Chemical mapping of a 207-nucleotide RNA with DMS and 2A3. Values cover nucleotides 27 to 156. Source: RMDB library OK3TST, as collected in RNAgym. For DMS, 13,942 sequencing reads were counted. For 2A3 the reverse transcriptase was SuperScript II with manganese.
[RMDB]
RNA sequence: GGGAACGACUCGAGUAGAGUCGAAAAAAUGGCGAAUUGACAACGAUAUAGAAACGCAAAGUGUUGACAAUCGUCCUGCGGUCGAGCUUUCUCUUGAUAUUCACUUCACGACUGAUCAGGAACAAGCAGUCAAUGAGAUGGCUAAAGCAACCAACUAACCACGUAAUAUAUUCGUAUAUUACGUGGUAAAAGAAACAACAACAACAAC
Reactivity to DMS in 0.01 (KOAc 150mM, MgCl2 10mM, bicine 150mM(pH8.5), 24C), signal-to-noise 5, nucleotides 027 to 156: a040a080u000g000g010c050g000a110a110u000u000g020a290c030a080a050c010g030a110u000a170u010a140g020a170a040a070c070g010c070a100a060a210g030u010g010u010u000g020a140c120a080a090u000c010g020u000c020c040u000g010c050g010g010u010c030g010a090g010c020u000u000u000c050u000c020u000u000g010a050u000a080u000u010c100a060c040u000u000c030a180c110g020a280c030u000g000a110u010c040a110g010g050a060a100c090a040a070g030c020a130g000u000c020a040a060u000g010a070g000a040u000g010g000c010u000a050a090a100g010c030a040a060c020c010a020a080c060u000a160
Reactivity to 2A3 in 0.01 (KOAc 150mM, MgCl2 10mM, bicine 150mM(pH8.5), 24C), signal-to-noise 9, nucleotides 027 to 156: a000a000u150g010g000c030g050a080a140u030u020g030a030c010a020a000c040g050a010u050a020u080a210g230a080a120a020c090g020c180a140a100a030g110u130g010u060u010g010a030c010a020a020u010c010g030u050c000c040u060g020c030g040g020u050c050g020a010g010c010u040u050u020c030u000c000u020u060g040a040u060a140u150u150c060a070c130u090u070c100a050c100g080a040c040u070g040a130u170c080a070g080g000a070a050c040a080a010g070c040a010g010u020c010a010a050u160g000a010g010a020u020g010g010c020u040a090a000a030g030c020a020a020c010c010a020a040c030u060a020